An RNA of 177 nucleotides, treated with 2A3 and DMS and read out base by base. The reactions ran in a buffer of 150 mM KOAc, 10 mM MgCl2 and 150 mM bicine (pH 8.5), at 24 C.
[RMDB]
RNA sequence: GGGAACGACUCGAGUAGAGUCGAAAAUAAGGGCGACGUAAAGUCGCCCAUUUUGUCUCUUCUUAACAUUAAUUGGUUUGGCCGCCGACAAGUUAAGAAGCUUCAAUUCUGGCGUUACGCAUAGCUGGUUAAGUUUAUGCUUCGGCAUAAACUUAACAAAAGAAACAACAACAACAAC
Reactivity to 2A3 in 0.01 (KOAc 150mM, MgCl2 10mM, bicine 150mM(pH8.5), 24C), signal-to-noise 5, nucleotides 027 to 126: u220a090a110g010g000g000c010g030a010c060g110u240a140a090a070g000u010c010g010c000c000c000a000u000u000u000u010g030u010c000u000c000u040u030c010u000u000a010a000c000a150u100u180a150a080u140u130g050g020u050u010u110g080g010c010c030g000c000c000g040a040c030a110a030g000u010u000a020a010g000a000a000g000c000u050u030c010a040a180u060u060c030u070g090g010c060g070u140u180a080c100g020c060a070u060a110g040c040u030g060
Reactivity to DMS in 0.01 (KOAc 150mM, MgCl2 10mM, bicine 150mM(pH8.5), 24C), signal-to-noise 3, nucleotides 027 to 126: u000a110a110g000g010g030c000g020a000c040g000u020a110a130a190g020u000c000g040c000c000c000a000u000u000u010u000g000u010c040u000c000u000u000c000u010u010a010a000c010a060u040u040a110a300u000u000g000g000u000u000u000g020g010c210c080g000c000c000g010a020c100a090a070g000u010u000a000a000g000a000a020g010c120u040u010c080a010a090u030u000c020u010g020g040c040g000u010u010a120c140g000c080a050u010a120g010c130u030g000